[RMDB]
This 177-nucleotide RNA was probed chemically with DMS and 2A3. The reactions ran in a buffer of 150 mM KOAc, 10 mM MgCl2 and 150 mM bicine (pH 8.5), at 24 C. 2A3 is a SHAPE reagent: it acylates the 2'-hydroxyl of flexible nucleotides of all four kinds. It was measured as part of the RMDB library TTRDEL.
RNA sequence: GGGAACGACUCGAGUAGAGUCGAAAAGAUAUGGACCUUCGACAUAAACACUAUGAAGUCGGAAACGAUGGAGUGUGUGUCGAGAGGUCCUAAGUCAAAGAUACACACUGUUCGCAGUGUGUAUCAAGCUUUGGCUGAUGUUCGCAUCAGCCAAAGCAAAAGAAACAACAACAACAAC
Reactivity to DMS in 0.01 (KOAc 150mM, MgCl2 10mM, bicine 150mM(pH8.5), 24C), signal-to-noise 1, nucleotides 027 to 126: g000a100u010a300u000g010g010a000c000c010u000u000c010g010a040c000a050u000a110a150a120c010a000c000u000a130u040g000a090a140g010u000c030g010g000a100a100a080c020g020a000u000g000g010a040g010u020g060u000g000u000g000u010c000g000a020g030a020g020g000u000c000c000u000a000a050g000u000c010a080a130a100g010a010u000a000c000a000c000a000c000u000g010u000u050c280g030c000a000g000u000g010u000g020u000a000u000c000a050a090
Reactivity to 2A3 in 0.01 (KOAc 150mM, MgCl2 10mM, bicine 150mM(pH8.5), 24C), signal-to-noise 2, nucleotides 027 to 126: g050a000u120a080u130g010g000a000c020c000u030u000c000g000a010c000a000u150a190a300a030c000a000c010u190a300u300g030a080a000g000u040c020g030g080a120a010a010c010g000a020u010g000g050a000g020u000g000u020g000u010g010u020c000g030a090g020a020g200g000u000c000c000u000a040a010g000u020c030a040a100a040g010a000u020a010c010a000c000a000c010u020g040u130u150c300g000c140a000g010u030g000u000g000u000a000u000c000a000a000